[RMDB]
RNA sequence: GGGAACGACUCGAGUAGAGUCGAAAACAACCAUAGAGCGGUCCGAGAGCUAGCCCUGAAGUCAGCAUACAAGUCGCGCUAAAAGGCAGAUACAACUACGCCGAUCUAUAGUGACGAAGGCCUCAGGCCGGGGCAAAGUGUUCGCACUUUGCCCCGGAAAAGAAACAACAACAACAAC
Reactivity to 2A3 in 0.01 (KOAc 150mM, MgCl2 10mM, bicine 150mM(pH8.5), 24C), signal-to-noise 2, nucleotides 027 to 126: c040a010a030c010c010a010u070a040g140a020g000c020g000g030u050c010c010g150a120g000a010g060c000u030a020g000c000c000c000u020g020a080a040g050u050c010a000g020c010a080u080a200c040a110a000g050u050c040g010c010g040c040u090a130a060a000a020g020g000c000a010g010a070u150a120c020a090a000c070u090a060c100g000c010c000g010a000u060c030u040a150u100a030g030u020g070a050c030g020a050a050g030g020c000c000u020c010a010g010g030
Reactivity to DMS in 0.01 (KOAc 150mM, MgCl2 10mM, bicine 150mM(pH8.5), 24C), signal-to-noise 3, nucleotides 027 to 126: c140a170a220c060c000a090u010a080g010a020g010c030g010g000u000c000c020g000a080g000a120g000c040u000a080g000c080c000c030u060g000a170a100g000u010c050a070g060c090a080u080a050c300a110a170g010u000c010g000c080g000c090u040a030a010a110a090g000g010c000a110g000a260u000a050c280a140a090c070u030a060c110g000c010c020g000a100u040c100u000a150u030a110g030u000g000a110c040g010a120a150g000g030c000c030u020c050a040g020g000

Chemical mapping of a 177-nucleotide RNA with 2A3 and DMS.
For DMS, 2,184 sequencing reads were counted.
The 2A3 profile rests on 1,196 reads.